[RMDB]
RNA sequence: GGGAACGACUCGAGUAGAGUCGAAAAGAUAUGGACCGAGUACGAGACGCAGGUCGGAAACGACCUGGCGUCGAUGAGUACCGGUCCUAAGUCAAAAUCCAAGGCGAAAGUUCGCUUUCGCCUUGGACCCAAUGCGACAGUUCGCUGUCGCAUUGGGAAAAGAAACAACAACAACAAC
Reactivity to DMS in 0.01 (KOAc 150mM, MgCl2 10mM, bicine 150mM(pH8.5), 24C), signal-to-noise 2, nucleotides 027 to 126: g000a000u000a030u010g000g000a030c000c000g000a190g050u000a000c010g000a030g000a000c000g000c020a030g000g010u010c010g000g000a000a020a030c000g020a000c000c010u000g010g020c010g020u010c000g010a100u010g020a300g010u000a000c000c020g000g000u010c000c000u000a000a020g000u000c000a070a110a180a230u000c000c000a000a000g000g010c000g000a020a010a020g020u000u000c220g000c000u000u000u000c000g010c000c000u020u000g000g000a000